Structure probing data (2A3 and DMS) for a 207-nucleotide construct. For 2A3, 661 sequencing reads were counted. Source: RMDB library M2RFPK, as collected in RNAgym. DMS (dimethyl sulfate) methylates the pairing face of unpaired adenines and cytosines. The DMS profile rests on 2,356 reads. The RNA was probed in 150 mM KOAc, 10 mM MgCl2 and 150 mM bicine (pH 8.5) at 24 C. DMS adducts were read by reverse transcription with MarathonRT. Reactivities are rounded to 0.1 and cut off at 0 and 3.
RNA sequence: GGGAACGACUCGAGUAGAGUCGAAAAGGAACCGGAUGUCAUCACGUUGAUGCAGUACCAGAUGGCAUCUUAAAUCCGAUCUGCAAAUAAGCAUGUAGAAAGCUGAUGUGGGCUUUAGCUGGACGGGGGAAUACAGGCAACUUCGGUUGCCUGUAAAACUCCCCAAAUACUUCGGUAUUUGGGGAGUAAAAGAAACAACAACAACAAC
Reactivity to 2A3 in 0.01 (KOAc 150mM, MgCl2 10mM, bicine 150mM(pH8.5), 24C), signal-to-noise 1, nucleotides 027 to 156: g040g010a040a020c040c020g000g000a000u000g070u040c000a000u000c010a030c250g110u100u140g080a080u150g020c050a080g030u080a130c050c040a020g000a010u000g010g000c000a000u000c010u000u040a010a090a020u000c020c000g020a080u020c000u060g040c010a090a070a150u190a140a050g010c060a040u120g030u090a050g070a120a060a040g000c050u050g010a030u060g070u090g050g010g010c020u000u080u180a030g020c050u040g000g010a010c000g000g020g000g020g000a020a010u050a030c000a000g040g010c000a000a000c000u050u000c070g020g000u000u000g000c020c000u010g000u000a000a000a000
Reactivity to DMS in 0.01 (KOAc 150mM, MgCl2 10mM, bicine 150mM(pH8.5), 24C), signal-to-noise 1, nucleotides 027 to 156: g010g000a090a180c100c220g050g000a040u010g000u010c000a070u000c030a130c100g010u020u000g000a150u000g030c090a130g000u000a120c050c050a160g040a060u000g040g000c020a050u000c010u010u000a070a070a090u010c020c010g000a030u000c040u000g000c000a080a090a140u010a070a120g010c040a100u010g010u030a060g000a130a090a090g000c020u000g040a100u000g000u010g020g020g000c060u000u000u000a000g000c050u010g040g010a050c060g000g010g020g130g010a180a220u000a000c000a040g000g020c000a020a050c000u010u010c240g040g010u000u000g000c000c020u000g000u000a000a020a110